[RMDB]
RNA sequence: GGGAACGACUCGAGUAGAGUCGAAAAGAUAGCUAAACUUUCUAAGCUGUUACUAUAUGCUGGAAUUAUAGUGUUCUCAGAAGCACCGCAAAACCUGGUCACUGCCUGCAUUAUCCUUUGGGGAAAGUGUUCUAUAUGGGUUCGCCCAUAUAGAACAAAAAGAAACAACAACAACAAC
Reactivity to 2A3 in 0.01 (KOAc 150mM, MgCl2 10mM, bicine 150mM(pH8.5), 24C), signal-to-noise 3, nucleotides 027 to 126: g000a010u050a010g010c010u060a030a100a110c030u090u110u030c040u060a080a010g020c010u020g020u070u090a060c040u090a050u010a010u200g020c030u020g000g090a090a060u160u020a050u080a090g030u030g060u140u020c140u020c020a010g040a060a000g020c060a020c080c050g000c070a030a050a060a100c010c020u030g030g010u020c010a010c040u050g000c010c000u030g020c010a020u080u010a060u160c020c020u090u080u110g050g000g020g000a040a050a030g070
Reactivity to DMS in 0.01 (KOAc 150mM, MgCl2 10mM, bicine 150mM(pH8.5), 24C), signal-to-noise 4, nucleotides 027 to 126: g000a050u000a050g010c010u000a080a090a120c080u000u010u000c030u010a150a090g010c010u000g010u000u000a090c100u010a070u010a020u000g010c050u000g010g000a110a090u000u000a100u000a030g010u010g010u000u000c020u000c020a090g030a080a120g010c070a060c110c080g010c110a040a040a100a090c100c020u000g000g000u000c030a040c050u010g010c020c030u000g020c050a040u000u000a060u000c020c020u000u000u020g010g010g010g010a050a040a060g010